Conditions: 150 mM KOAc, 10 mM MgCl2 and 150 mM bicine (pH 8.5), 24 C. This 207-nucleotide RNA was probed chemically with 2A3 and DMS. For DMS the reverse transcriptase was MarathonRT. Values are in units of 0.01, from 0 to 300, in steps of 10.

RNA sequence: GGGAACGACUCGAGUAGAGUCGAAAACUCAAUGUAGGGAAUAACAUUGAAUUGAUACAAAUACCUUUUUCGGUGUAGGGACAAACACCGAAUUGAUACAAAUACCUUUCUCAAUGUAGGGAAUAACAAAACAGGCAUCGCUUCGGCGAUGCCUGAAGAAUAACCUUCAGUUCGCUGAAGGUUAUUCAAAAGAAACAACAACAACAAC
Reactivity to 2A3 in 0.01 (KOAc 150mM, MgCl2 10mM, bicine 150mM(pH8.5), 24C), signal-to-noise 5, nucleotides 027 to 156: c010u010c010a010a030u040g010u060a070g030g080g090a070a170u100a120a010c010a020u000u030g030a070a080u070u090g070a090u170a190c080a030a160a050u160a110c030c010u020u000u010u010u010c000g000g010u000g000u010a020g020g020g100a070c110a060a030a000c000a010c010c010g010a000a010u020u020g010a000u020a030c030a000a100a010u090a070c020c020u040u080u040c030u020c060a080a130u140g040u080a040g010g010g060a050a050u090a120a030c080a040a080a020a030c000a000g000g000c000a000u000c000g010c030u080u080c170g100g000c000g000a000u000g000c010c000u000g000a000a000
Reactivity to DMS in 0.01 (KOAc 150mM, MgCl2 10mM, bicine 150mM(pH8.5), 24C), signal-to-noise 2, nucleotides 027 to 156: c040u000c010a120a050u010g000u000a070g000g010g030a160a150u000a100a060c010a030u010u000g010a030a030u000u010g000a100u000a090c040a050a230a050u000a000c000c000u000u000u010u000u030c010g030g080u000g060u000a090g030g020g020a180c130a170a090a060c000a020c020c000g010a030a020u000u000g000a060u000a020c020a020a170a050u000a000c010c010u000u000u000c090u000c020a050a040u020g050u000a110g010g010g040a120a100u000a060a070c070a050a030a090a160c000a010g030g020c020a000u010c000g040c000u000u000c300g000g020c000g010a000u000g010c020c030u000g020a000a040